[RMDB]
RNA sequence: GGGAACGACUCGAGUAGAGUCGAAAAACGCAUCAUACGUGAUGCGAGAACUACAGUUCCGCUCCUCUAGCACACAGAGGUCAAUUGGGUGCUACCCCCCCCUCUCCCGUGGGUCAACGGGAACCAAAAAAGACCCUUUAGUUCGCUAAAGGGUCAACCCGUAUACUCUGUUCGCAGAGUAUACGGGAAAAGAAACAACAACAACAAC
Reactivity to 2A3 in 0.01 (KOAc 150mM, MgCl2 10mM, bicine 150mM(pH8.5), 24C), signal-to-noise 2, nucleotides 027 to 156: a000c010g000c000a020u010c000a020u020a140c200g130u060g020a020u020g000c050g000a040g000a000a020c100u240a070c070a080g000u040u010c030c020g060c030u060c000c030u100c070u070a040g050c000a020c000a000c000a030g030a000g040g000u060c030a060a030u140u050g020g000g000u040g020c040u050a050c000c000c000c000c000c000c000c000u020c010u000c000c000c000g000u000g000g010g000u150c000a000a010c000g000g000g010a000a000c010c000a000a040a030a030a000a010g020a020c020c000c020u000u000u000a010g010u010u020c080g010c110u000a010a000a000g000g010g000u000c000a000a000